[RMDB]
RNA sequence: GGGAACGACUCGAGUAGAGUCGAAAAGAUAUGGAGAGCGCCACGCAGCAACAGCUUAGCUCGGAAACGAGCUAAGACAUGCUGGUGGGCGCUCUCCUAAGUCAAAAGAGAGCCUUCGGGCUCUCAAGUCUCUAUCAAGCUUCGGCUUGAUAGAGACAAAAGAAACAACAACAACAAC
Reactivity to DMS in 0.01 (KOAc 150mM, MgCl2 10mM, bicine 150mM(pH8.5), 24C), signal-to-noise 1, nucleotides 027 to 126: g040a080u010a300u010g000g010a000g000a020g010c020g040c000c000a050c020g010c020a020g000c000a060a140c300a180g000c000u010u020a000g020c000u010c000g020g000a130a100a150c000g000a020g000c010u000a020a000g000a030c130a050u010g020c000u010g000g010u000g010g040g020c000g000c010u000c020u000c000c000u010a010a020g000u010c020a150a060a300a130g000a000g010a020g050c000c000u000u000c300g060g000g000c000u000c000u000c000a020a100
Annotation
The record gives the reactivity of an RNA of 177 nucleotides to DMS. Conditions: 150 mM KOAc, 10 mM MgCl2 and 150 mM bicine (pH 8.5), 24 C. Reactivities are given for positions 27 through 126. It was measured as part of the RMDB library TTRDES.